[RMDB]
RNA sequence: GGGAACGACUCGAGUAGAGUCGAAAAGAUAUGGAUCCUAGGUGGAUAUCCUUGGAUUUAUGGGUCACAGUAGUCGGAAACGACUAUCACAGCCCAUUGUCAGGAUUUCCACCUAGGAUCCUAAGUCCGUGCUAGUAAUCUUCGGAUUACUAGCACGAAAAGAAACAACAACAACAAC
Reactivity to DMS in 0.01 (KOAc 150mM, MgCl2 10mM, bicine 150mM(pH8.5), 24C), signal-to-noise 1, nucleotides 027 to 126: g000a170u010a300u000g000g000a020u000c000c010u000a020g010g010u020g030g020a070u000a020u000c000c000u000u020g000g020a020u000u020u000a020u000g020g000g020u000c060a180c300a300g000u000a000g000u000c010g000g000a140a200a260c000g000a000c000u000a000u000c090a150c270a300g000c000c000c000a020u010u000g030u020c010a050g010g020a030u000u000u000c000c000a000c060c000u000a000g010g000a000u000c000c000u020a000a160g000u020c010